[RMDB]
RNA sequence: GGGAACGACUCGAGUAGAGUCGAAAAUAGUACGGGAACAAAGAGGUCUUAAAUUAGUAGGAUGGGAGUGGAUACGAGAGUUGCUUUAGAUUCAUGUUUAUGUUUUAGCAAAUUCAGAAUCGAUUACGAUAGCACGAUGAUUCGUCAUCGUGCUAUCAAAAGAAACAACAACAACAAC
Reactivity to 2A3 in 0.01 (KOAc 150mM, MgCl2 10mM, bicine 150mM(pH8.5), 24C), signal-to-noise 3, nucleotides 027 to 126: u110a000g090u060a010c030g020g020g000a090a020c000a000a150a030g090a040g020g030u000c020u060u160a170a190a120u140u190a060g110u030a020g010g060a030u060g030g010g030a050g040u040g000g060a050u060a100c060g020a060g000a010g100u050u040g030c040u100u090u040a020g000a030u020u040c040a040u080g020u020u060u000a080u070g020u060u090u080u080a060g000c020a060a040a060u050u000c000a010g040a050a040u010c000g040a100u140u070a070c120
Reactivity to DMS in 0.01 (KOAc 150mM, MgCl2 10mM, bicine 150mM(pH8.5), 24C), signal-to-noise 4, nucleotides 027 to 126: u000a120g030u000a060c110g000g000g000a080a060c150a060a090a080g010a070g010g010u010c050u010u000a030a100a140u000u000a120g030u010a030g000g010a080u010g030g000g000a090g030u000g010g000a090u000a080c120g000a120g000a090g010u010u000g000c040u000u010u000a120g000a030u000u000c010a050u010g020u010u000u000a060u010g000u000u000u010u000a130g010c040a030a040a030u000u000c020a040g010a010a010u000c020g000a160u010u010a090c250

Structure probing data (2A3 and DMS) for a 177-nucleotide construct. It was measured as part of the RMDB library OK2TST. Reactivities are given for positions 27 through 126. For 2A3 the reverse transcriptase was SuperScript II with manganese. The DMS profile rests on 3,328 reads. Conditions: 150 mM KOAc, 10 mM MgCl2 and 150 mM bicine (pH 8.5), 24 C.